The data come from the RNA Mapping Database (RMDB), library TTRINS.
Chemical mapping of a 177-nucleotide RNA with 2A3 and DMS.
DMS (dimethyl sulfate) methylates the pairing face of unpaired adenines and cytosines.
For DMS the reverse transcriptase was MarathonRT.
For 2A3, 41,205 sequencing reads were counted.
RNA sequence: GGGAACGACUCGAGUAGAGUCGAAAAGAUAUGGAGACGUAACCUUGCAUCGAUCUGUGCGAAGUCAUCUAUGUCGGAAACGACAUAGAUGUCACGCACAGGGAGCAAGGAAGAAGUCUCCUAAGUCCAUCAAGUACAUCUUCGGAUGUACUUGAUGAAAAGAAACAACAACAACAAC
Reactivity to 2A3 in 0.01 (KOAc 150mM, MgCl2 10mM, bicine 150mM(pH8.5), 24C), signal-to-noise 6, nucleotides 027 to 126: g010a010u050a020u140g000g000a000g010a000c020g020u070a020a060c010c010u020u010g020c060a180u300c170g030a020u000c010u000g010u010g020c010g100a300a090g130u100c000a010u000c000u000a000u000g000u000c000g000g000a030a030a020c000g010a000c000a000u000a000g010a000u000g010u010c010a010c010g000c000a000c010a000g000g010g000a010g000c010a000a010g030g010a010a000g010a000a000g000u000c000u020c000c000u000a000a000g000u000c010
Reactivity to DMS in 0.01 (KOAc 150mM, MgCl2 10mM, bicine 150mM(pH8.5), 24C), signal-to-noise 8, nucleotides 027 to 126: g000a040u000a140u010g010g000a010g020a010c000g000u000a190a300c000c000u000u000g000c010a300u010c220g010a030u010c000u000g010u000g010c000g010a220a190g020u000c000a000u000c000u010a000u000g000u000c000g010g000a060a020a100c000g000a020c000a000u000a000g010a000u000g020u000c060a140c010g010c000a000c000a010g000g000g010a020g030c000a010a010g010g000a010a010g010a120a270g000u000c000u000c000c000u000a010a080g000u000c020
For 2A3 the reverse transcriptase was SuperScript II with manganese. For DMS, 14,651 sequencing reads were counted.